[RMDB]
RNA sequence: GGGAACGACUCGAGUAGAGUCGAAAAAUGGACACGCAUAUGGACACAUAUGGACACACAUAUGGACACGUGUGGAUAUGUGUGCGUACACGUCGCUGGGACACAUGCCUGCCACUCGGGGCCCAGCGCGAGCAGUUUAUUUCGAUAAACUGCUCGCAAAAGAAACAACAACAACAAC
Reactivity to 2A3 in 0.01 (KOAc 150mM, MgCl2 10mM, bicine 150mM(pH8.5), 24C), signal-to-noise 4, nucleotides 027 to 126: a000u110g040g010a020c030a010c070g030c030a020u030a000u070g150g060a020c020a000c010a010u030a010u040g200g060a050c010a010c000a000c000a030u160a130u300g210g040a050c050a030c220g010u030g000u010g030g020a000u000a000u030g010u000g000u040g040c020g010u040a020c060a000c090g110u060c050g030c010u020g000g000g050a030c050a000c020a180u200g070c000c000u040g020c030c030a090c050u070c040g040g000g050g000c010c000c000a010g000c020
Reactivity to DMS in 0.01 (KOAc 150mM, MgCl2 10mM, bicine 150mM(pH8.5), 24C), signal-to-noise 5, nucleotides 027 to 126: a080u000g000g030a140c070a040c040g020c040a100u010a020u000g000g000a170c050a030c010a010u000a040u000g010g010a260c020a030c060a030c090a110u010a150u000g010g000a090c160a050c150g010u000g030u000g000g010a070u000a010u000g010u000g010u000g000c030g020u000a050c120a060c070g010u000c100g020c010u000g000g010g000a130c080a070c140a080u000g000c010c030u000g000c070c060a140c060u000c110g020g000g020g010c000c000c010a020g000c070

An RNA of 177 nucleotides, treated with 2A3 and DMS and read out base by base. 2A3 adducts were read by reverse transcription with SuperScript II with manganese.